[RMDB]
RNA sequence: GGGAACGACUCGAGUAGAGUCGAAAAGAUAUGGAGAGCGUAGAAGUCCAACAGCUCGGAAACGAGACAUGGACCUACCUCUCCUAAGUCAAAUCUAGGUAAUCUAGUUCGCUAGAUUACCUAGAAAGCUUUAAAACAACUUCGGUUGUUUUAAAGCAAAAGAAACAACAACAACAAC
Reactivity to DMS in 0.01 (KOAc 150mM, MgCl2 10mM, bicine 150mM(pH8.5), 24C), signal-to-noise 2, nucleotides 027 to 126: g010a050u000a300u000g000g000a030g000a000g000c300g020u000a010g000a100a160g000u000c000c000a020a130c250a180g010c020u000c000g000g000a100a070a180c000g000a000g000a030c180a200u000g000g000a020c000c000u000a000c010c000u000c000u000c010c010u000a000a040g010u010c010a090a060a110u000c000u000a000g000g000u000a000a000u000c000u000a000g000u010u010c220g020c000u000a000g000a010u010u000a000c000c000u000a000g000a020a060a130
Reactivity to 2A3 in 0.01 (KOAc 150mM, MgCl2 10mM, bicine 150mM(pH8.5), 24C), signal-to-noise 2, nucleotides 027 to 126: g020a020u040a030u120g000g000a020g010a000g000c130g000u000a010g060a300a060g050u030c000c010a020a040c070a230g060c000u000c000g000g000a060a060a020c010g000a010g010a010c050a150u090g000g030a000c000c000u000a010c000c000u000c000u030c000c000u000a030a000g010u000c030a050a020a140u060c000u000a000g000g000u000a000a000u000c000u000a010g020u080u050c180g030c150u000a000g000a010u000u000a010c000c000u000a000g000a000a000a000